[RMDB]
RNA sequence: GGGAACGACUCGAGUAGAGUCGAAAAAUAUAGAUGCCCACUUUCUAUCCCAGACAAAGCAGAGUGGGGAGAACUUUCCUUACCUGGUAGCGUACCAAGCCACCGUGUGCGCUAGGGCUCAAGCCCCUCCCCCAUCGUGGGACCAGAUGUGGAAGUGAUGCAAAGGACUAUUCGUAGUCCUUUGCAUAAAAGAAACAACAACAACAAC
Reactivity to DMS in 0.01 (KOAc 150mM, MgCl2 10mM, bicine 150mM(pH8.5), 24C), signal-to-noise 1, nucleotides 027 to 156: a110u000a140u010a000g000a080u010g000c000c000c000a040c010u000u010u010c030u000a090u000c020c000c010a300g000a300c100a010a100a170g040c040a100g010a110g020u000g000g000g000g040a040g000a090a050c000u000u000u010c030c000u000u000a020c020c000u000g040g090u000a010g010c000g050u000a060c000c040a140a090g000c060c070a080c110c060g000u000g030u000g010c020g000c050u000a040g010g000g000c000u000c300a140a190g020c080c000c010c040u010c010c000c000c010c030a060u000c110g000u000g030g010g000a060c010c010a070g040a060u000g040u010g020g000a030a020g010u010g000
Reactivity to 2A3 in 0.01 (KOAc 150mM, MgCl2 10mM, bicine 150mM(pH8.5), 24C), signal-to-noise 2, nucleotides 027 to 156: a000u190a000u000a030g060a050u020g010c020c000c000a000c010u050u040u040c000u020a100u010c000c030c010a140g070a180c190a180a100a020g090c060a050g030a000g120u010g000g010g020g000a010g050a010a050c050u040u090u080c030c020u120u040a280c020c020u000g020g000u000a000g000c000g010u000a010c000c080a150a090g100c100c020a120c070c090g070u110g000u010g080c000g000c000u010a000g000g000g020c050u070c170a110a110g020c040c010c000c010u050c020c000c000c000c030a230u120c060g070u300g010g000g010a000c000c030a000g000a100u150g020u120g060g000a000a000g010u030g060

Notes:
An RNA of 207 nucleotides, treated with DMS and 2A3 and read out base by base. For DMS, 1,869 sequencing reads were counted. Values cover nucleotides 27 to 156. It was measured as part of the RMDB library OK3TST. The RNA was probed in 150 mM KOAc, 10 mM MgCl2 and 150 mM bicine (pH 8.5) at 24 C.